Chemical mapping of a 207-nucleotide RNA with DMS and 2A3.
Source: RMDB library ARCHII, as collected in RNAgym.
For 2A3, 1,179 sequencing reads were counted.
RNA sequence: GGGAACGACUCGAGUAGAGUCGAAAAAAGCCUGGGCCCGUGCGGCUCGGACGCCCGAACCGUGUCAGGACCUGACGGUAGCAGCACUAAGGGAUGCUCUGGGCAGGCGCGUGGUUCCGGGUUUUUUCAAAGAGAGUGCACGUUCGCGUGCACUCUCGUUAAAUGGGGGAUUCGUCCCCCAUUUAACAAAAGAAACAACAACAACAAC
Reactivity to DMS in 0.01 (KOAc 150mM, MgCl2 10mM, bicine 150mM(pH8.5), 24C), signal-to-noise 1, nucleotides 027 to 156: a030a030g000c000c020u010g000g030g020c040c000c000g050u010g020c090g000g000c000u000c000g020g010a060c060g000c030c010c020g000a060a130c200c100g030u000g000u000c040a300g020g020a080c030c010u010g020a210c200g070g020u000a040g020c020a180g000c000a100c050u000a190a160g000g000g010a120u000g030c120u000c020u010g000g000g040c050a040g010g020c000g060c030g030u000g000g010u000u000c030c020g040g000g030u010u000u000u020u000u010c020a050a120a150g000a000g000a040g040u010g000c020a010c010g060u030u010c300g040c000g110u000g050c000a000c000u000c050u000c000
Reactivity to 2A3 in 0.01 (KOAc 150mM, MgCl2 10mM, bicine 150mM(pH8.5), 24C), signal-to-noise 2, nucleotides 027 to 156: a000a000g000c000c000u000g000g000g000c000c000c000g060u050g010c000g010g000c000u010c010g000g000a020c020g010c010c000c000g020a100a080c140c090g010u000g080u150c000a010g020g000a020c010c050u270g160a100c220g000g000u000a000g030c010a010g000c010a000c010u010a050a080g020g000g010a080u060g000c070u000c000u000g000g030g000c000a060g200g180c010g000c020g040u170g000g030u200u220c010c130g000g000g000u000u000u000u000u000u010c010a000a010a000g010a000g000a000g010u000g010c000a000c000g010u100u150c220g020c020g050u000g000c000a000c000u000c000u000c000